[RMDB]
RNA sequence: GGGAACGACUCGAGUAGAGUCGAAAAAUCGUGAUGGGGAUAGAUUAUUGCAAUUAUUAAUCUUGAACGAGGAAUGCCUAGUAAGCAUGAUUCAUCAGAUUGUGCUAACUACGUCCCUGCCCUUUGUACACACCGCCCGUCGCUCCUACCGAUUGAAGUGUACGCUUUACUUCGGUAAAGCGUACACAAAAGAAACAACAACAACAAC
Reactivity to 2A3 in 0.01 (KOAc 150mM, MgCl2 10mM, bicine 150mM(pH8.5), 24C), signal-to-noise 2, nucleotides 027 to 156: a000u090c020g040u060g000a050u070g020g030g080g020a030u020a070g100a070u000u040a040u020u190g000c040a080a100u050u060a110u100u160a280a020u060c010u000u060g070a030a060c100g010a050g040g010a160a000u030g000c000c000u010a010g020u130a010a000g000c010a000u000g000a050u060u050c020a040u030c010a140g030a090u010u040g010u050g010c010u000a000a020c010u000a010c150g070u070c000c020c000u010g000c030c000c010u030u010u110g080u080a010c030a000c010a000c030c020g050c070c000c020g040u040c000g000c020u000c000c010u030a110c010c010g180a160u000u180g120a200a030